Chemical mapping of a 177-nucleotide RNA with 2A3 and DMS. DMS (dimethyl sulfate) methylates the pairing face of unpaired adenines and cytosines. For 2A3, 8,753 sequencing reads were counted. The reactions ran in a buffer of 150 mM KOAc, 10 mM MgCl2 and 150 mM bicine (pH 8.5), at 24 C. Source: RMDB library TTRDEL, as collected in RNAgym. High 2A3 reactivity points to a flexible backbone, as in loops and unpaired stretches.
[RMDB]
RNA sequence: GGGAACGACUCGAGUAGAGUCGAAAAGAUAUGGAUCGCGCGACCCCAACAACAGCUUGUGUCGGAAACGACCAAGACAUGUUGACGCCGAUCCUAAGUCAAAGUCCCGACGUUCGCGUCGGGACAAGAAUAAUAUAUGGUUCGCCAUAUAUUAUUCAAAAGAAACAACAACAACAAC
Reactivity to 2A3 in 0.01 (KOAc 150mM, MgCl2 10mM, bicine 150mM(pH8.5), 24C), signal-to-noise 5, nucleotides 027 to 126: g080a020u220a120u300g000g000a000u020c020g010c000g010c020g300a200c070c060c070c010a060a030c020a010a010c000a030g030c000u070u010g070u090g020u300c010g010g030a070a040a080c010g000a000c000c010a010a010g070a030c050a270u060g010u020u050g050a110c000g000c000c020g000a000u000c000c000u010a070a000g080u100c130a300a040a030g000u000c010c040c010g030a010c010g030u090u190c300g000c020g120u000c000g000g000g000a000c010a000a000
Reactivity to DMS in 0.01 (KOAc 150mM, MgCl2 10mM, bicine 150mM(pH8.5), 24C), signal-to-noise 4, nucleotides 027 to 126: g010a120u010a120u010g010g020a010u000c010g010c190g010c010g020a130c060c020c030c020a140a170c030a010a010c020a040g020c000u000u000g010u020g010u000c000g000g010a100a060a200c000g000a010c000c010a010a010g010a070c080a090u000g010u000u010g010a180c020g020c010c000g000a010u000c000c000u000a020a070g000u010c120a070a130a140g000u000c000c010c000g010a000c000g010u000u010c230g020c020g010u000c000g000g020g010a000c010a000a020